[RMDB]
RNA sequence: GGGAACGACUCGAGUAGAGUCGAAAACGGCAUUUCCCCAGCAGCCAUGACCUACCAGGCUGCGGUGCGGCUCGCCGCACAGGUCAUCCCUCUUCGGGCGCGUCCUGCGUCCUUCCACGCCAACCCAAGACCAUUGCUUCCUUCGGGAAGCAAUGAACGAUACUUAUAGGUUCGCCUAUAAGUAUCGAAAAGAAACAACAACAACAAC
Reactivity to 2A3 in 0.01 (KOAc 150mM, MgCl2 10mM, bicine 150mM(pH8.5), 24C), signal-to-noise 4, nucleotides 027 to 156: c050g090g000c050a070u030u040u070c020c020c010c000a030g000c000a000g000c010c020a180u120g010a050c010c020u120a210c100c080a020g010g000c000u000g000c010g000g010u000g000c000g000g000c050u080c150g140c020c010g000c000a010c010a010g000g020u010c010a090u090c010c020c010u100c000u120u140c060g010g000g000c010g000c000g050u190c040c090u130g000c010g020u020c020c010u010u020c020c010a060c060g030c010c020a030a070c040c000c010a050a010g050a050c050c000a010u000u000g000c000u000u000c000c000u010u050c080g050g000g010a000a000g010c000a000a000u000g000a020a000
Reactivity to DMS in 0.01 (KOAc 150mM, MgCl2 10mM, bicine 150mM(pH8.5), 24C), signal-to-noise 2, nucleotides 027 to 156: c050g000g000c030a260u010u010u000c000c020c000c040a130g030c060a040g040c020c010a140u010g010a090c050c010u000a180c120c070a200g020g040c020u000g020c020g010g050u010g010c000g000g030c030u010c300g030c060c020g000c010a080c040a040g030g000u000c030a210u010c010c010c000u010c060u020u000c060g040g030g000c010g040c030g030u010c050c040u060g010c010g030u020c040c030u010u000c050c030a050c050g000c020c030a050a090c020c000c000a110a140g000a210c070c010a030u000u010g040c000u000u000c000c000u010u030c300g080g010g000a000a010g000c010a010a000u000g000a050a140

Structure probing data (2A3 and DMS) for a 207-nucleotide construct. Conditions: 150 mM KOAc, 10 mM MgCl2 and 150 mM bicine (pH 8.5), 24 C. DMS adducts were read by reverse transcription with MarathonRT. For 2A3 the reverse transcriptase was SuperScript II with manganese. Reactivities are given for positions 27 through 156. For 2A3, 5,520 sequencing reads were counted.